This 177-nucleotide RNA was probed chemically with 2A3 and DMS.
RNA sequence: GGGAACGACUCGAGUAGAGUCGAAAAUGGGACAUUGCACUGGCCCCCAUGUCAGGGUUUGCAAAUCAAAUCAGGUACCCUGCAUUAAUCUCAGACAUGGUGACCUGGUUCGCUAAUAACAAUAUAAGUGUAUAGAACUGUUCGCAGUUCUAUACACAAAAGAAACAACAACAACAAC
Reactivity to 2A3 in 0.01 (KOAc 150mM, MgCl2 10mM, bicine 150mM(pH8.5), 24C), signal-to-noise 2, nucleotides 027 to 126: u050g000g040g000a020c050a080u040u160g000c020a000c070u010g030g020c010c010c000c010c020a050u060g030u050c020a010g080g000g060u060u080u030g000c040a030a050a090u090c040a030a140a080u080c030a040g110g000u050a070c010c010c020u030g000c000a010u030u150a110a090u020c040u010c040a030g000a150c010a030u030g000g000u020g030a000c000c020u020g000g050u050u000c010g000c030u050a120a100u130a260a090c030a110a030u140a040u020a300a090
Reactivity to DMS in 0.01 (KOAc 150mM, MgCl2 10mM, bicine 150mM(pH8.5), 24C), signal-to-noise 4, nucleotides 027 to 126: u000g000g000g010a070c090a090u000u010g010c060a140c120u000g020g000c010c020c050c010c020a040u000g010u000c020a080g010g010g020u000u000u000g010c080a050a080a110u030c120a050a060a080u010c100a060g010g000u000a070c050c040c020u010g000c040a070u000u010a070a100u000c070u000c090a110g010a100c030a020u000g010g010u010g010a060c010c010u000g010g010u010u010c080g030c080u010a060a070u010a060a110c090a070a090u000a090u000a100a150

Source information
For DMS the reverse transcriptase was MarathonRT. 2A3 adducts were read by reverse transcription with SuperScript II with manganese. For 2A3, 1,633 sequencing reads were counted.